[RMDB]
RNA sequence: GGGAACGACUCGAGUAGAGUCGAAAAUACGGAUGCCCAGGUCGGACCGCGGGGAGGUGGAGAUGCCAUGCCGACCCGAAGAGGAAAGAAGGACUCGGACGCGAACCCGUGAGUGGAAACCUCGUUCAUACGGGCUGGUUCGCCAGCCCGAAAAGAAACAACAACAACAAC
Reactivity to 2A3 in 0.01 (KOAc 150mM, MgCl2 10mM, bicine 150mM(pH8.5), 24C), signal-to-noise 2, nucleotides 027 to 129: u210a070c050g080g000a000u070g000c030c020c030a020g080g020u040c000g000g000a050c000c010g010c010g060g000g000g000a000g000g020u000g010g000a060g010a080u130g000c000c000a030u040g040c000c000g030a000c030c000c000g010a030a070g040a020g000g000a030a040a040g000a070a000g000g000a000c030u000c040g020g000a000c060g030c020g000a000a130c000c080c000g030u120g040a060g010u080g020g000a060a000a010c000c000u010c060g100u090u050c050a070u030a150
Reactivity to DMS in 0.01 (KOAc 150mM, MgCl2 10mM, bicine 150mM(pH8.5), 24C), signal-to-noise 1, nucleotides 027 to 129: u070a100c120g000g130a000u040g080c000c070c000a170g020g020u060c060g000g000a080c000c070g030c070g060g000g000g020a100g010g080u020g070g000a050g050a000u000g020c090c050a190u030g010c140c010g000a100c070c120c070g010a030a050g010a070g040g010a010a000a160g030a110a020g020g030a090c100u000c070g000g000a040c070g000c100g040a070a080c060c100c010g000u020g110a070g030u010g070g020a040a210a080c010c020u030c130g020u020u230c130a050u100a110